[RMDB]
RNA sequence: GGGAACGACUCGAGUAGAGUCGAAAAUACUUAGUACGCGCGUAGUUGCAGGCAUUCCGGGUGCAGCCACUGACGCGGAAGACUUUUCCCAGAGUGUGCGCUUCAACUGGCGUGCUGAGUAGUGCACGAAUUGCACGUACGUUCGCGUACGUGCAAAACCAGAAGUAGAUUUCGAUCUACUUCUGGUAAAAGAAACAACAACAACAAC
Reactivity to 2A3 in 0.01 (KOAc 150mM, MgCl2 10mM, bicine 150mM(pH8.5), 24C), signal-to-noise 3, nucleotides 027 to 156: u040a000c000u000u010a000g010u010a000c010g020c030g020c030g110u080a020g010u020u020g000c030a070g060g000c010a020u020u060c050c070g100g000g020u040g050c040a010g040c050c030a070c120u140g050a070c060g020c060g050g030a020a020g140a100c040u140u100u060u020c010c010c000a020g010a020g030u050g010u020g020c090g010c070u020u070c040a140a140c050u030g040g010c010g000u000g000c000u000g000a000g020u040a020g010u080g050c030a000c110g070a100a100u070u010g000c000a000c000g000u000a000c000g010u010u040c180g000c000g070u000a000c000g020u010g010c000a000a000a000
Reactivity to DMS in 0.01 (KOAc 150mM, MgCl2 10mM, bicine 150mM(pH8.5), 24C), signal-to-noise 3, nucleotides 027 to 156: u000a050c000u000u000a060g030u000a050c020g000c010g020c100g010u000a080g010u000u010g000c040a110g000g030c010a080u000u010c020c140g020g060g100u000g020c100a210g020c030c020a080c030u000g030a080c060g000c040g010g030a110a070g010a090c090u000u000u000u000c000c000c000a170g000a090g010u000g030u000g020c070g000c020u000u000c020a080a090c060u010g010g000c020g030u010g010c000u010g000a060g020u000a040g020u010g010c040a100c050g040a050a180u000u000g030c010a030c000g000u000a000c000g030u000u000c300g040c020g020u000a010c000g050u020g000c020a000a010a090
Notes:
The record gives the reactivity of an RNA of 207 nucleotides to 2A3 and DMS. For 2A3 the reverse transcriptase was SuperScript II with manganese. The 2A3 profile rests on 3,040 reads. Source: RMDB library M2RFOK, as collected in RNAgym. DMS adducts were read by reverse transcription with MarathonRT. The reactions ran in a buffer of 150 mM KOAc, 10 mM MgCl2 and 150 mM bicine (pH 8.5), at 24 C.